[RMDB]
RNA sequence: GGGAACGACUCGAGUAGAGUCGAAAAUAGAAAUAGGAUCUUUCUCAAACCUUCUCAUGGUGGUAGCUCCAGUAAAGGAAUAGGUAGGAGACCUAGGAUAGGUGGAGAUCUCCUGUAGGGUAGGCAGAUUUCAAAAAUGAUUCGUCAUUUUUGAAAUAAAAGAAACAACAACAACAAC
Reactivity to DMS in 0.01 (KOAc 150mM, MgCl2 10mM, bicine 150mM(pH8.5), 24C), signal-to-noise 9, nucleotides 027 to 126: u010a080g010a070a100a120u010a080g000g010a150u000c040u000u000u000c010u010c040a100a140a120c030c010u000u000c050u000c050a080u000g010g010u000g010g010u000a080g010c060u000c030c020a090g020u000a050a100a110g000g010a120a100u000a030g010g010u000a100g010g010a110g010a060c030c010u000a060g000g010a140u000a040g010g020u000g010g000a050g000a060u000c030u000c020c010u000g010u010a070g010g000g010u000a020g010g000c110a080g000
Reactivity to 2A3 in 0.01 (KOAc 150mM, MgCl2 10mM, bicine 150mM(pH8.5), 24C), signal-to-noise 4, nucleotides 027 to 126: u160a020g050a030a090a030u110a070g050g030a070u020c000u000u070u000c010u000c000a150a210a120c000c000u070u010c030u020c040a080u130g050g000u030g010g060u110a040g030c010u000c020c010a050g090u210a080a100a030g060g010a060a090u060a070g000g080u030a050g040g200a070g070a020c000c010u000a020g050g030a040u040a080g110g010u030g010g010a040g010a050u020c020u010c000c000u020g060u110a060g030g020g020u020a030g040g000c020a030g010
Source information:
Structure probing data (DMS and 2A3) for a 177-nucleotide construct. The 2A3 profile rests on 6,029 reads. For DMS the reverse transcriptase was MarathonRT. Source: RMDB library OK2TRN, as collected in RNAgym. The DMS profile rests on 14,661 reads.